[RMDB]
RNA sequence: GGGAACGACUCGAGUAGAGUCGAAAAUUGAAAUUGAACCGUCCUGUUAUCGAAAGAUAGGCAGAACAUACGAAAUGUGUGACAGCAUGGGAAGUAAAGGCAGACCGUGGUUCCCUUGAGUAUCUUAAUUAGGGGGACGAGUUCGCUCGUCCCCCAACGAUAAUUCAACCUUCGGGUUGAAUUAUCGAAAAGAAACAACAACAACAAC
Reactivity to DMS in 0.01 (KOAc 150mM, MgCl2 10mM, bicine 150mM(pH8.5), 24C), signal-to-noise 2, nucleotides 027 to 156: u020u000g010a050a140a070u010u000g010a100a050c090c030g000u000c030c010u000g030u000u010a040u000c020g000a150a090a200g000a030u000a050g080g050c020a030g000a040a060c010a190u010a170c070g010a070a100a060u000g000u000g000u020g050a100c070a120g020c000a100u010g010g020g010a130a170g010u000a080a050a070g020g010c000a140g000a120c060c020g000u010g040g020u000u000c030c000c030u020u020g000a110g030u000a070u000c110u000u000a070a150u010u010a210g000g000g000g050g050a040c030g000a010g020u000u010c210g000c030u000c010g010u010c010c010c000c010c000a000a010